[RMDB]
RNA sequence: GGGAACGACUCGAGUAGAGUCGAAAAUACGCGCUCCACGGUUGAGAGGCCCCACUAAUAAUAGACCAGAUCCGGGAGUUAACGCUGCACGGGCCAAUAUCCGUCUAACAGUAAUGCCAGACAUCACUAGCUAGUAUACAUUCGUGUAUACUAGCUAAAAAGAAACAACAACAACAAC
Reactivity to 2A3 in 0.01 (KOAc 150mM, MgCl2 10mM, bicine 150mM(pH8.5), 24C), signal-to-noise 9, nucleotides 027 to 126: u150a020c040g010c010g010c030u020c010c020a130c040g030g030u080u070g100a100g010a050g130g030c010c000c010c010a050c040u050a030a140u150a160a060u070a040g080a070c030c030a020g010a100u040c020c010g000g020g000a050g020u050u080a100a020c050g010c040u060g000c030a030c070g000g030g000c010c010a030a010u120a060u070c020c020g030u020c040u060a070a040c030a080g050u100a080a040u060g030c010c000a020g030a070c020a060u080c020a030c100
Reactivity to DMS in 0.01 (KOAc 150mM, MgCl2 10mM, bicine 150mM(pH8.5), 24C), signal-to-noise 7, nucleotides 027 to 126: u030a040c090g020c090g010c030u010c020c030a090c070g020g010u030u010g010a130g000a110g010g020c030c020c020c090a080c120u010a070a060u050a090a090u020a070g000a100c040c030a070g000a100u020c030c030g000g000g000a090g010u020u010a080a090c090g010c030u000g000c080a050c080g000g000g010c050c030a080a090u030a080u030c050c060g010u000c030u020a080a120c090a070g010u010a070a040u010g010c010c020a060g000a060c100a050u030c070a080c160